The data come from the RNA Mapping Database (RMDB), library M2RFPK. This 207-nucleotide RNA was probed chemically with DMS and 2A3. Reactivities are given for positions 27 through 156. For DMS the reverse transcriptase was MarathonRT. For DMS, 2,563 sequencing reads were counted. The RNA was probed in 150 mM KOAc, 10 mM MgCl2 and 150 mM bicine (pH 8.5) at 24 C. 2A3 adducts were read by reverse transcription with SuperScript II with manganese.
RNA sequence: GGGAACGACUCGAGUAGAGUCGAAAAUGGGCCGUGUGCUUAACCAGGACAAGAUCUCCUUCUCUCCAACGUUGUUGCCAACCCAUGAUUCUCCUAACCUGUGCUUGGAGAGACGUGGACCCAGAGUAAAACGAAGGGUGCUUCGGCACCCUUCGAACACAUCCUUCAAGUUCGCUUGAAGGAUGUGAAAAGAAACAACAACAACAAC
Reactivity to DMS in 0.01 (KOAc 150mM, MgCl2 10mM, bicine 150mM(pH8.5), 24C), signal-to-noise 1, nucleotides 027 to 156: u000g000g000g040c040c010g040u010g030u010g000c030u000u000a070a150c070c050a090g000g030a150c080a110a120g010a120u000c040u040c000c020u000u010c030u000c000u020c010c020a040a050c080g020u000u000g000u000u000g020c040c060a140a090c000c020c030a070u010g010a190u000u000c010u010c020c000u010a010a050c050c060u000g000u010g030c030u000u010g010g000a150g010a000g000a070c040g030u000g050g000a140c030c030c050a300g010a110g030u020a070a060a070a200c000g000a020a030g000g080g040u010g050c000u000u000c290g030g010c000a020c000c000c010u000u000c000g010a010a150
Reactivity to 2A3 in 0.01 (KOAc 150mM, MgCl2 10mM, bicine 150mM(pH8.5), 24C), signal-to-noise 1, nucleotides 027 to 156: u030g000g010g000c080c040g060u070g050u070g010c030u120u130a050a100c030c000a040g000g030a040c070a120a010g000a120u030c000u000c020c030u050u040c030u000c000u040c020c020a060a120c020g030u010u000g010u000u020g100c080c050a020a060c040c000c000a000u070g090a100u060u040c040u070c020c000u080a080a130c040c100u220g030u150g040c050u040u050g000g000a000g000a000g010a020c020g010u030g010g010a060c030c030c070a060g030a040g110u160a070a100a010a020c000g000a000a000g000g000g010u000g020c000u030u100c120g060g000c000a000c000c000c000u010u000c000g000a000a000